[RMDB]
RNA sequence: GGGAACGACUCGAGUAGAGUCGAAAAAGUAUCUAAUUCGUUAGAUACUCGGGGACGGGUGAGGCGGCCGUGUGCGCAGACAGUGCUCCAGCCCCGCGCGCGAAUUUCGCCUAUUCGUAGGCGAAAAGAUUUUAUUUUACUUCGGUAAAAUAAAAUCAAAAGAAACAACAACAACAAC
Reactivity to 2A3 in 0.01 (KOAc 150mM, MgCl2 10mM, bicine 150mM(pH8.5), 24C), signal-to-noise 1, nucleotides 027 to 126: a000g010u000a000u000c000u000a000a030u050u040c130g040u050u000a010g020a010u000a010c010u000c020g030g000g000g020a030c040g110g000g010u050g020a090g020g050c100g060g030c060c000g100u170g020u050g030c020g000c010a020g090a230c040a070g050u020g090c010u010c030c000a020g000c000c000c000c000g030c000g000c000g040c000g060a060a060u030u020u000c000g000c000c000u000a010u000u010c060g070u010a000g010g000c000g010a010a020a000a020
Reactivity to DMS in 0.01 (KOAc 150mM, MgCl2 10mM, bicine 150mM(pH8.5), 24C), signal-to-noise 3, nucleotides 027 to 126: a020g020u000a000u010c000u000a020a020u000u010c180g000u000u000a000g000a000u000a000c000u000c040g000g010g010g000a240c080g000g000g030u010g000a070g010g030c140g030g010c020c040g010u000g010u000g020c020g020c010a110g000a080c180a090g010u000g000c020u000c030c030a130g000c020c010c010c020g000c060g010c030g010c030g000a090a140u000u000u000c000g000c000c000u000a040u000u010c170g010u000a020g010g010c000g000a000a010a030a060
Chemical mapping of a 177-nucleotide RNA with 2A3 and DMS.
2A3 adducts were read by reverse transcription with SuperScript II with manganese.
DMS (dimethyl sulfate) methylates the pairing face of unpaired adenines and cytosines.
The RNA was probed in 150 mM KOAc, 10 mM MgCl2 and 150 mM bicine (pH 8.5) at 24 C.
For DMS, 2,953 sequencing reads were counted.